The record gives the reactivity of an RNA of 177 nucleotides to DMS and 2A3. Conditions: 150 mM KOAc, 10 mM MgCl2 and 150 mM bicine (pH 8.5), 24 C. DMS adducts were read by reverse transcription with MarathonRT. 2A3 adducts were read by reverse transcription with SuperScript II with manganese.

RNA sequence: GGGAACGACUCGAGUAGAGUCGAAAAGAUAUGGACCCACUACCCACCUCCCGGGGAGCUUGGACCAUAUUUACUCGGAAACGAGUAAAUAUGCUAGCUCGCCGUGGGAGAGGUGGGUCCUAAGUCACAAUAUCUCUAUGUUCGCAUAGAGAUAUUGAAAAGAAACAACAACAACAAC
Reactivity to DMS in 0.01 (KOAc 150mM, MgCl2 10mM, bicine 150mM(pH8.5), 24C), signal-to-noise 9, nucleotides 027 to 126: g010a160u010a190u010g000g010a020c000c000c010a010c010u000a140c020c030c040a300c120c010u000c000c000c000g010g000g020g010a010g010c010u000u000g040g000a130c300c010a010u000a000u000u000u000a010c000u000c000g010g000a140a090a190c000g000a010g010u000a000a010a010u000a000u000g010c040u000a020g000c000u000c000g000c000c010g010u010g020g000g000a010g000a040g020g010u000g000g000g010u000c000c000u010a030a110g010u010c160a250
Reactivity to 2A3 in 0.01 (KOAc 150mM, MgCl2 10mM, bicine 150mM(pH8.5), 24C), signal-to-noise 7, nucleotides 027 to 126: g110a090u280a290u300g010g010a000c000c070c000a020c010u230a290c030c030c020a030c020c010u010c020c000c000g000g000g010g010a000g010c030u180u300g080g100a110c140c020a000u000a010u000u000u000a000c000u010c000g020g040a100a110a080c000g010a010g000u010a000a000a000u000a000u000g000c000u010a010g020c010u010c090g300c030c020g160u270g030g040g000a010g010a000g010g000u010g000g020g000u000c000c000u000a010a010g100u030c040a030